[RMDB]
RNA sequence: GGGAACGACUCGAGUAGAGUCGAAAAGAUAUGGAUGAUUGGCCUGACAGGCGGGUGGCAAGCUCCCGGUCGGAAACGACCGUGCGAGUGAUGACCCAUUGCCUGUCAGGCCAAUCAUCCUAAGUCACAAGGUAUACCAGUUCGCUGGUAUACCUUGAAAAGAAACAACAACAACAAC
Reactivity to DMS in 0.01 (KOAc 150mM, MgCl2 10mM, bicine 150mM(pH8.5), 24C), signal-to-noise 2, nucleotides 027 to 126: g000a060u000a300u000g000g020a000u000g010a040u010u000g000g000c030c000u000g010a000c000a000g000g030c010g020g040g030u010g010g000c050a170a300g000c000u000c000c000c000g000g010u000c010g000g000a060a150a270c000g000a010c030c000g040u020g010c200g000a010g040u000g000a070u010g010a200c260c000c000a150u010u000g010c000c010u000g010u000c010a000g000g030c000c000a000a010u000c000a010u000c000c010u000a010a070g020u000c060a300
The record gives the reactivity of an RNA of 177 nucleotides to DMS.
Reactivities are given for positions 27 through 126.
The RNA was probed in 150 mM KOAc, 10 mM MgCl2 and 150 mM bicine (pH 8.5) at 24 C.